[RMDB]
About this RNA
Structure probing data (DMS) for a 177-nucleotide construct. The RNA was probed in 150 mM KOAc, 10 mM MgCl2 and 150 mM bicine (pH 8.5) at 24 C. It was measured as part of the RMDB library TTRINS.

RNA sequence: GGGAACGACUCGAGUAGAGUCGAAAAGAUAUGGAUCAAGGAUUGGACCUCCUCCCUUUCAACAGCUACCGGUUCGGAAACGAACCGUAGACAUGAAACCAGGAGGUCCAAUCCUUGAUCCUAAGUCCAGUACUUUAGACUUCGGUCUAAAGUACUGAAAAGAAACAACAACAACAAC
Reactivity to DMS in 0.01 (KOAc 150mM, MgCl2 10mM, bicine 150mM(pH8.5), 24C), signal-to-noise 2, nucleotides 027 to 126: g010a100u000a300u020g000g020a010u000c000a010a000g020g020a020u000u010g010g030a020c010c000u000c000c000u000c090c090c130u000u010u000c030a040a100c260a180g000c000u000a010c160c130g070g000u000u020c000g020g000a070a060a210c010g010a010a010c000c020g000u000a010g000a030c090a200u000g020a000a030a020c120c200a010g000g010a030g010g030u000c020c010a010a000u010c000c010u000u000g000a000u000c000c010u000a000a100g010u010c050